An RNA of 207 nucleotides, treated with 2A3 and read out base by base. The data come from the RNA Mapping Database (RMDB), library ARCHII. 2A3 adducts were read by reverse transcription with SuperScript II with manganese. The RNA was probed in 150 mM KOAc, 10 mM MgCl2 and 150 mM bicine (pH 8.5) at 24 C.
RNA sequence: GGGAACGACUCGAGUAGAGUCGAAAAGCAUGCGGAGGGCGUUGGCUGGCCUCCCAAAAAGCCGACAAAACAAUAAAUGCCGAACCUAAGGCUGAAUGCGAAAUUAUCAGCUUCGCUGAUCUCGAAGAUCUAAGAGUAGCUGCUUAAUUAGCAAAGUGAUAGGUCACAUGUUCGCAUGUGACCUAUCAAAAGAAACAACAACAACAAC
Reactivity to 2A3 in 0.01 (KOAc 150mM, MgCl2 10mM, bicine 150mM(pH8.5), 24C), signal-to-noise 1, nucleotides 027 to 156: g060c080a060u240g030c070g060g060a060g050g000g060c060g020u110u080g050g000c010u000g040g070c020c030u030c000c020c000a020a060a070a010a000g020c000c000g040a030c080a020a160a020a000c070a040a060u180a290a120a080u200g060c000c030g040a060a060c020c090u110a110a000g000g000c000u050g050a100a020u070g000c020g000a010a010a010u000u000a020u030c000a000g000c000u030u010c030g000c110u070g010a020u000c060u060c140g230a120a080g020a020u000c010u090a180a000g060a070g020u030a000g010c000u000g000c010u020u010a010a000u010u000a000g000c010a060a040a020g070u020